An RNA of 177 nucleotides, treated with 2A3 and DMS and read out base by base.
The reactions ran in a buffer of 150 mM KOAc, 10 mM MgCl2 and 150 mM bicine (pH 8.5), at 24 C.
The data come from the RNA Mapping Database (RMDB), library M2PK50.
For 2A3, 3,568 sequencing reads were counted.
DMS adducts were read by reverse transcription with MarathonRT.
RNA sequence: GGGAACGACUCGAGUAGAGUCGAAAAAGAGUUCGCUUCGGCGAACUCUACAACGGGAAAACGGCCUCCCGGAAAGAUUAGGCGGAUUCCGUCCAAGCGCCGAGAGUGGUGCGUUCGCGCACCACAACGUUUAGUCUGAUUUCGAUCAGACUAAACGAAAAGAAACAACAACAACAAC
Reactivity to 2A3 in 0.01 (KOAc 150mM, MgCl2 10mM, bicine 150mM(pH8.5), 24C), signal-to-noise 3, nucleotides 027 to 126: a000g000a000g000u000u020c000g000c030u060u080c230g050g010c000g010a000a000c000u010c000u010a000c020a030a010c000g000g010g030a020a090a060a080c010g010g000c010c000u000c000c010c010g010g040a110a130a000g090a100u210u300a070g010g000c080g090g050a270u300u120c040c020g010u010c070c060a020a010g070c070g000c220c020g020a020g020a010g000u010g000g030u010g020c030g010u030u050c260g000c000g000c050a000c030c000a000c000a010a000
Reactivity to DMS in 0.01 (KOAc 150mM, MgCl2 10mM, bicine 150mM(pH8.5), 24C), signal-to-noise 3, nucleotides 027 to 126: a050g010a030g020u000u010c000g040c010u010u010c170g010g020c020g020a000a000c000u010c000u000a030c100a130a180c020g000g010g010a010a020a090a120c030g010g030c000c020u000c010c030c000g020g000a150a080a090g010a140u000u000a110g010g000c000g000g000a230u010u020c020c010g000u000c020c150a030a050g040c150g000c000c000g010a300g000a180g000u000g000g020u000g010c000g030u000u010c220g010c020g020c020a010c000c000a000c020a020a060